[RMDB]
RNA sequence: GGGAACGACUCGAGUAGAGUCGAAAACUCUGGUCACCAUAGCGGGUUGUUCUGCACAUGUCCCGUGGCUAGGUAUACCGCGUUGGGGUAAGACACAUUUGGGUGCCCUGCCAUGCCUGUCAUCCAGCCAUGCACCCUCUUUCGAGAGGGUGCAUGGAAAAGAAACAACAACAACAAC
Reactivity to DMS in 0.01 (KOAc 150mM, MgCl2 10mM, bicine 150mM(pH8.5), 24C), signal-to-noise 1, nucleotides 027 to 126: c000u000c030u000g000g000u000c090a200c000c050a100u110a200g000c040g000g070g000u000u040g000u000u000c020u010g010c130a050c050a190u000g010u000c070c000c000g030u010g000g000c080u040a060g000g010u000a010u040a120c060c140g000c000g000u080u000g000g000g000g000u070a120a040g000a080c060a010c070a260u030u120u090g000g000g060u000g000c210c000c010u010g000c040c030a090u000g020c030c000u000g000u000c000a070u010c000c200a050g020
Reactivity to 2A3 in 0.01 (KOAc 150mM, MgCl2 10mM, bicine 150mM(pH8.5), 24C), signal-to-noise 2, nucleotides 027 to 126: c010u000c020u020g000g000u020c010a060c110c000a050u120a040g070c040g000g010g000u010u000g030u120u010c010u040g030c010a030c020a160u140g010u090c000c000c010g000u050g000g000c000u020a010g000g000u090a020u080a120c040c010g000c000g030u070u120g100g000g010g050u020a140a120g110a030c100a000c060a110u160u090u110g110g000g000u030g010c000c010c000u030g010c000c000a010u000g020c000c000u010g020u050c000a010u040c040c000a010g030